[RMDB]
RNA sequence: GGGAACGACUCGAGUAGAGUCGAAAAGGUACUCUUAAAGUACUGUAUGGGUAAACACAAUAUAUUUUUCUUUAAUAUGCAUGCCUGCCUUCAUUCUUCAUUUAUUCAUCAGACUAGUAUUGAGUGGGCUAGCUGGUAACUAGGACGCAUCUGCAAACCAAAUCAUGCCAUUCGUGGCAUGAUUUGGAAAAGAAACAACAACAACAAC
Reactivity to 2A3 in 0.01 (KOAc 150mM, MgCl2 10mM, bicine 150mM(pH8.5), 24C), signal-to-noise 3, nucleotides 027 to 156: g020g000u020a020c020u110c100u210u190a190a280a040g020u030a040c020u010g050u110a150u130g030g010g050u090a060a150a020c050a030c060a140a090u250a060u070a130u170u120u060u050u000c010u050u130u040a090a070u110a050u220g010c000a000u060g000c010c040u040g020c050c030u060u020c050a140u060u020c050u120u050c050a160u040u120u300a140u280u090c030a070u040c010a020g170a200c020u000a010g030u040a050u150u150g010a060g060u120g050g040g000c010u000a000g000c010u000g000g010u070a080a030c060u030a030g040g040a050c020g010c020a050u000c020u060g000c050a070a040a060